[RMDB]
RNA sequence: GGGAACGACUCGAGUAGAGUCGAAAAAUCACUCACUGUGUAGGAUCCAAAGUCCCACAGGAUCCAGGGCUCCUGUGGGCUCUCUCUCCUGUGGGCCUGGCAGCUUUGCUCACCCUUAUGGAACAACACCGCAUGGCGUGCCCUCUUGGUGAUGGAAGCACUUCAUUUAUUUCGAUAAAUGAAGUGCAAAAGAAACAACAACAACAAC
Reactivity to DMS in 0.01 (KOAc 150mM, MgCl2 10mM, bicine 150mM(pH8.5), 24C), signal-to-noise 1, nucleotides 027 to 156: a120u000c020a080c020u020c070a090c030u020g000u000g000u000a050g000g010a070u000c060c070a030a140a110g030u000c010c000c000a020c010a120g020g020a030u000c050c060a060g000g010g040c110u000c010c120u050g020u000g030g010g060c000u000c020u000c010u000c080u000c000c020u000g030u010g010g000g050c060c040u000g010g050c060a080g000c070u000u000u000g000c020u000c010a060c060c000c010u000u080a140u000g000g030a110a300c090a120a080c030a100c010c040g020c100a220u010g020g020c040g030u000g000c010c020c000u000c040u010u000g010g020u000g000a070u020g010g030a150a230
Reactivity to 2A3 in 0.01 (KOAc 150mM, MgCl2 10mM, bicine 150mM(pH8.5), 24C), signal-to-noise 3, nucleotides 027 to 156: a000u080c020a020c030u030c000a030c040u020g010u010g070u170a070g050g030a050u040c070c020a120a030a010g070u040c000c000c000a000c000a000g010g000a000u040c030c020a000g020g010g000c000u050c070c120u300g100u300g040g000g010c010u000c000u000c000u000c010u000c010c000u010g010u000g000g000g000c010c000u010g010g000c000a010g020c030u110u070u120g020c000u060c040a150c020c010c020u060u180a130u270g030g030a090a070c060a060a000c020a110c030c040g010c070a040u050g030g000c050g050u050g000c020c000c000u070c020u060u080g020g000u050g040a050u090g050g050a110a030
Record summary
The data come from the RNA Mapping Database (RMDB), library OK3TST. An RNA of 207 nucleotides, treated with DMS and 2A3 and read out base by base. The RNA was probed in 150 mM KOAc, 10 mM MgCl2 and 150 mM bicine (pH 8.5) at 24 C. For DMS, 2,608 sequencing reads were counted.